[RMDB]
RNA sequence: GGGAACGACUCGAGUAGAGUCGAAAAGGAAGUGCUGGGCGGCGAGCCGCUGCUGCGCAACACCGCCGACGGCUACGCGCCGCGCCCGGAUUUUCGUCCGCAAACCAAGUUCGAGACGCGCGGCCUAAAUAUGCGGAGGGUUCGCCCUCCGCAUAUUAAAAGAAACAACAACAACAAC
Reactivity to DMS in 0.01 (KOAc 150mM, MgCl2 10mM, bicine 150mM(pH8.5), 24C), signal-to-noise 1, nucleotides 027 to 126: g000g000a130a120g010u000g000c060u010g000g000g000c020g000g000c020g000a260g010c110c030g070c060u010g070c140u040g000c050g020c100a060a150c140a130c210c020g050c060c030g010a110c090g000g000c010u000a060c060g000c080g010c020c030g010c030g000c030c070c000g010g000a020u000u000u000u000c140g000u000c040c150g010c290a180a060a100c070c040a000a110g000u000u000c050g010a120g000a030c170g000c050g040c010g000g020c010c020u000a010
Source: RMDB library OK2TST, as collected in RNAgym. Chemical mapping of a 177-nucleotide RNA with DMS. The reactions ran in a buffer of 150 mM KOAc, 10 mM MgCl2 and 150 mM bicine (pH 8.5), at 24 C. The DMS profile rests on 670 reads. Reactivities are rounded to 0.1 and cut off at 0 and 3. For DMS the reverse transcriptase was MarathonRT.